The record gives the reactivity of an RNA of 177 nucleotides to DMS and 2A3. The DMS profile rests on 22,199 reads. It was measured as part of the RMDB library OK2TST. Conditions: 150 mM KOAc, 10 mM MgCl2 and 150 mM bicine (pH 8.5), 24 C. The 2A3 profile rests on 22,656 reads.
[RMDB]
RNA sequence: GGGAACGACUCGAGUAGAGUCGAAAAGACGACCCGGCCGAGUACGUCCUGGUCGAAUCCUUCCGUGACGGCGAGGCCGGCGGCGUACACGUCAACAGCGAUCACUUCAGGCAGGCCAUGCGGGAACUCUCUUUACUAAGUUCGCUUAGUAAAGAGAAAAAGAAACAACAACAACAAC
Reactivity to DMS in 0.01 (KOAc 150mM, MgCl2 10mM, bicine 150mM(pH8.5), 24C), signal-to-noise 9, nucleotides 027 to 126: g010a110c040g010a120c080c010c010g010g010c020c010g000a300g010u000a050c010g010u000c010c040u010g000g020u010c080g000a130a090u010c130c040u000u000c030c040g020u000g010a050c050g010g000c040g000a300g000g000c010c000g000g010c110g010g000c040g020u000a060c090a110c070g000u000c050a070a090c100a070g000c040g010a090u000c060a060c050u000u000c050a070g000g010c050a060g000g000c040c040a060u000g010c030g000g000g000a100a100c140
Reactivity to 2A3 in 0.01 (KOAc 150mM, MgCl2 10mM, bicine 150mM(pH8.5), 24C), signal-to-noise 7, nucleotides 027 to 126: g050a010c030g030a060c010c000c000g010g000c010c010g020a030g070u170a280c010g010u000c000c010u010g020g020u040c050g030a110a220u170c020c010u050u000c040c010g040u060g020a020c020g010g000c010g010a030g000g030c010c000g000g000c010g010g000c010g000u040a060c070a020c060g050u040c040a080a060c010a080g040c010g050a040u060c020a010c040u080u050c050a030g020g010c000a000g040g000c020c020a030u080g020c030g020g020g050a080a070c020